[RMDB]
RNA sequence: GGGAACGACUCGAGUAGAGUCGAAAAACGGGCAGUGGCGAUGGCAACGCGGCAGCCGCAGGGUCGACUUCUUCGCAGCCGCAACAGACGGGGGACGGGCAAAGAGGGGAUCUCGUUCUGUUGGAAGCCCUGACGGUGGUUUCGACCACCGUCAGGGAAAAGAAACAACAACAACAAC
Reactivity to 2A3 in 0.01 (KOAc 150mM, MgCl2 10mM, bicine 150mM(pH8.5), 24C), signal-to-noise 2, nucleotides 027 to 126: a000c020g030g020g060c020a080g020u060g010g000c080g070a090u020g040g000c020a020a070c070g000c000g050g000c000a000g000c040c000g060c020a030g080g020g000u080c010g010a040c090u090u100c030u040u040c070g000c090a010g010c000c010g010c010a000a030c000a010g080a000c000g000g000g000g000g010a110c040g000g020g030c060a100a050a000g060a050g040g040g000g010a000u000c000u000c040g060u160u040c050u050g020u030u020g030g000a070a000g060